[RMDB]
Structure probing data (2A3 and DMS) for a 177-nucleotide construct.
RNA sequence: GGGAACGACUCGAGUAGAGUCGAAAAGAAAGAAAGAAAGAAUCCCGCUCGUCGGCGCCCCCGUGGGAGGCGUCGCAAGAGCCCUCGCGCACGGCGUGAGGGCCCUUGAAGACGGGAUCAAUUUCAACAUUCGUCUUACAUUCGUGUAAGACGAAUGAAAAGAAACAACAACAACAAC
Reactivity to 2A3 in 0.01 (KOAc 150mM, MgCl2 10mM, bicine 150mM(pH8.5), 24C), signal-to-noise 5, nucleotides 027 to 126: g110a020a080a010g080a050a080a010g040a030a060a000g050a040a060u010c020c010c000g020c230u030c010g080u010c010g010g000c000g000c000c000c000c020c040g120u260g040g050g000a060g000g000c010g000u010c000g000c000a000a000g000a010g010c000c000c000u000c010g010c000g000c010a180c280g300g000c010g050u010g000a010g000g000g000c000c000c000u020u020g020a070a030g000a010c000g000g000g000a000u010c000a010a050u010u040u030c020a030a030
Reactivity to DMS in 0.01 (KOAc 150mM, MgCl2 10mM, bicine 150mM(pH8.5), 24C), signal-to-noise 2, nucleotides 027 to 126: g000a160a010a110g000a120a080a120g000a010a050a090g000a200a080u000c000c000c000g000c280u000c010g000u010c000g000g000c000g000c000c000c000c000c050g050u050g050g000g000a020g000g000c000g030u010c000g000c020a000a010g000a160g000c000c000c000u000c000g000c000g010c000a220c140g000g030c020g030u000g030a020g020g000g020c000c020c000u000u000g010a180a090g000a070c010g010g000g000a010u000c060a070a070u000u000u000c000a100a220
2A3 adducts were read by reverse transcription with SuperScript II with manganese. Values cover nucleotides 27 to 126.